[RMDB]
RNA sequence: GGGAACGACUCGAGUAGAGUCGAAAAGUGGGCCUUCGCGCGCAGGCAGCUCGAUGACGGGAAUGCGGCCUUACAGGCAGGGUGAGAUCUGUCAAAGUGUUCUUUCCCGACGCCGCGCGAACGCAUGAACCCGUCAUAGUUUCGACUAUGACGGGUUAAAAGAAACAACAACAACAAC
Reactivity to DMS in 0.01 (KOAc 150mM, MgCl2 10mM, bicine 150mM(pH8.5), 24C), signal-to-noise 3, nucleotides 027 to 126: g030u000g000g010g000c020c050u000u000c010g030c000g010c030g010c130a160g010g010c100a120g010c110u000c080g010a120u000g010a200c050g020g010g000a080a020u010g000c130g030g010c010c020u000u000a080c300a110g000g020c000a050g000g020g010u010g000a200g000a150u020c020u000g010u000c090a080a040a090g010u020g010u000u000c020u000u010u000c010c000c020g030a120c170g020c130c010g020c040g020c020g010a040a030c160g020c040a130u000g010
Reactivity to 2A3 in 0.01 (KOAc 150mM, MgCl2 10mM, bicine 150mM(pH8.5), 24C), signal-to-noise 2, nucleotides 027 to 126: g080u100g070g060g000c000c000u020u060c000g000c010g000c020g000c030a040g090g000c040a080g050c080u060c120g190a200u140g070a020c050g000g000g000a020a020u040g000c060g080g010c010c000u020u080a070c060a050g000g020c000a000g000g000g000u090g060a080g050a090u040c010u030g030u020c000a050a020a030g180u230g010u030u000c000u000u010u030c000c000c000g060a060c060g000c030c000g000c000g010c000g000a030a010c030g020c020a050u080g100